Source information:
The record gives the reactivity of an RNA of 177 nucleotides to DMS. Conditions: 150 mM KOAc, 10 mM MgCl2 and 150 mM bicine (pH 8.5), 24 C. Values cover nucleotides 27 to 126.
[RMDB]
RNA sequence: GGGAACGACUCGAGUAGAGUCGAAAAGCCGUCCUUUAAUGCCAGGUGUCCUGCAGCCCAACAGGCUAUUAAAGAGGGGGAAGUGAGCUGUGUGUAGCGACAGGAUUCUGAAAGAGUGCGAACAUAAGACUUAUUCACGGUUCGCCGUGAAUAAGUCAAAAGAAACAACAACAACAAC
Reactivity to DMS in 0.01 (KOAc 150mM, MgCl2 10mM, bicine 150mM(pH8.5), 24C), signal-to-noise 2, nucleotides 027 to 126: g000c040c050g010u020c050c030u020u000u010a030a040u000g020c040c040a100g030g060u010g010u000c000c020u000g020c110a130g000c050c030c020a110a090c130a120g000g000c060u010a060u000u000a050a040a100g000a140g000g000g020g010g020a060a100g030u000g000a080g020c020u000g040u000g010u020g020u000a130g020c100g000a080c040a060g020g020a090u000u000c090u000g010a050a050a050g010a070g010u000g000c020g030a070a090c110a080u000a070a150